Conditions: 150 mM KOAc, 10 mM MgCl2 and 150 mM bicine (pH 8.5), 24 C. Structure probing data (2A3 and DMS) for a 207-nucleotide construct. Source: RMDB library M2RFPK, as collected in RNAgym. DMS adducts were read by reverse transcription with MarathonRT. For 2A3, 1,191 sequencing reads were counted.

RNA sequence: GGGAACGACUCGAGUAGAGUCGAAAAAACGCUUCACAACCUGAAAGAAGCGCCUGUUAUCAGGACGGAUGAUCCAUUUACCGGUGCAGACCUCUGCAAACACCGGGUUGCAGAACAUCGCGACGGACAAGGGAGGAUACCUUCGGGUAUCCUCCAACGUAGGGUUAUCGUUCGCGAUAACCCUACGAAAAGAAACAACAACAACAAC
Reactivity to 2A3 in 0.01 (KOAc 150mM, MgCl2 10mM, bicine 150mM(pH8.5), 24C), signal-to-noise 2, nucleotides 027 to 156: a000a000c040g020c010u020u020c030a070c020a280a200c040c030u020g040a040a030a050g010a000a050g000c000g060c000c000u160g020u210u140a130u300c020a020g060g010a020c030g040g000a000u060g010a040u060c010c040a030u000u070u200a090c010c010g030g030u030g010c000a000g020a150c000c050u110c030u060g010c000a050a030a030c050a060c060c050g060g040g050u000u040g000c030a000g000a020a020c020a070u150c050g000c010g080a040c020g060g060a040c050a110a120g080g000g000a000g000g000a000u000a000c000c000u030u130c220g050g020g010u000a000u000c000c000u000c000c000a000a000
Reactivity to DMS in 0.01 (KOAc 150mM, MgCl2 10mM, bicine 150mM(pH8.5), 24C), signal-to-noise 2, nucleotides 027 to 156: a050a050c000g030c000u000u000c000a160c140a070a300c050c000u000g000a120a120a110g010a030a010g030c040g040c010c100u000g000u010u010a130u000c070a040g030g000a120c010g030g020a120u010g030a220u010c030c020a120u000u000u000a080c030c000g000g010u000g010c000a090g030a220c070c050u010c050u010g000c010a070a040a010c030a210c080c080g010g010g050u000u030g000c010a000g010a060a100c080a040u000c010g010c020g000a140c010g030g010a120c130a180a140g030g020g030a030g080g010a010u000a010c000c000u000u000c280g090g040g000u000a000u000c000c000u000c010c020a010a010